An RNA of 177 nucleotides, treated with 2A3 and DMS and read out base by base.
The data come from the RNA Mapping Database (RMDB), library OK2TRN.
The reactions ran in a buffer of 150 mM KOAc, 10 mM MgCl2 and 150 mM bicine (pH 8.5), at 24 C.
2A3 adducts were read by reverse transcription with SuperScript II with manganese.
DMS adducts were read by reverse transcription with MarathonRT.
[RMDB]
RNA sequence: GGGAACGACUCGAGUAGAGUCGAAAAUUAAGGCGAAUGAGGUGUUCGUUCUUAAGCAGAAUGACUCUCCGUAUAUACCCACUUAUCUUUUCUUUUAUAAGAAUUCUCGCGAAGUGGCAUACGGAUAAAUUAAAGGUUGGUUCGCCAACCUUUAAUUAAAAGAAACAACAACAACAAC
Reactivity to 2A3 in 0.01 (KOAc 150mM, MgCl2 10mM, bicine 150mM(pH8.5), 24C), signal-to-noise 3, nucleotides 027 to 126: u000u000a010a020g000g000c000g010a000a020u110g080a130g250g300u230g040u090u010c010g010u110u100c010u030u030a020a020g050c030a030g090a280a090u110g040a120c010u050c010u000c070c000g010u020a010u010a010u000a060c000c000c010a000c000u010u020a090u130c020u060u110u120u030c020u070u170u110u140a300u160a240a020g020a030a050u130u000c120u090c140g080c060g040a040a000g010u010g000g040c030a010u020a020c010g000g030a020u130a040
Reactivity to DMS in 0.01 (KOAc 150mM, MgCl2 10mM, bicine 150mM(pH8.5), 24C), signal-to-noise 4, nucleotides 027 to 126: u010u010a010a020g010g000c010g010a040a020u010g010a170g030g020u010g010u000u000c010g000u000u010c000u000u000a020a030g030c160a100g000a150a090u020g000a160c050u000c060u000c000c010g000u000a000u010a090u000a190c300c000c000a030c000u000u000a120u000c020u000u000u000u000c020u010u010u010u040a210u030a080a010g000a040a040u000u000c110u000c150g010c190g000a030a020g010u000g010g060c210a020u000a010c000g000g010a030u000a040